[RMDB]
RNA sequence: GGGAACGACUCGAGUAGAGUCGAAAAGCCGAAGAGUUCGCUCUUCGGCGACGAAUUUGGCGUAGAUGAGUGUCUACAGUACUAGCCAUCCCAGAUGUACAAAUAAGCAUUGCUUCGGCAAUGCUAAGUACGCCUUUAACUUCGGUUAAAGGCGUACAAAAGAAACAACAACAACAAC
Reactivity to 2A3 in 0.01 (KOAc 150mM, MgCl2 10mM, bicine 150mM(pH8.5), 24C), signal-to-noise 2, nucleotides 027 to 126: g020c000c000g000a000a000g010a000g050u140u150c270g030c090u000c000u030u030c010g000g060c000g000a000c010g060a050a180u180u100u050g050g030c020g010u000a000g030a040u070g300a040g300u270g030u010c000u030a000c040a010g020u010a040c020u040a010g000c020c000a050u000c010c000c010a000g000a080u100g000u030a020c030a070a170a110u170a130a010g000c000a000u000u010g010c000u000u070c170g030g000c000a000a000u000g000c000u000a000a000
Reactivity to DMS in 0.01 (KOAc 150mM, MgCl2 10mM, bicine 150mM(pH8.5), 24C), signal-to-noise 1, nucleotides 027 to 126: g020c010c000g030a000a000g000a030g010u000u010c200g030c000u000c010u000u000c000g000g000c000g000a040c180g000a140a140u000u010u000g000g010c000g040u000a030g010a010u010g010a180g010u010g000u000c000u000a010c020a150g000u000a020c030u000a290g010c020c040a040u000c010c000c000a120g000a080u000g020u000a020c010a060a090a080u010a150a090g020c000a000u000u000g000c020u010u010c220g030g000c000a000a000u000g000c000u000a000a050
An RNA of 177 nucleotides, treated with 2A3 and DMS and read out base by base. The reactions ran in a buffer of 150 mM KOAc, 10 mM MgCl2 and 150 mM bicine (pH 8.5), at 24 C. Values cover nucleotides 27 to 126. It was measured as part of the RMDB library M2PK50. DMS adducts were read by reverse transcription with MarathonRT.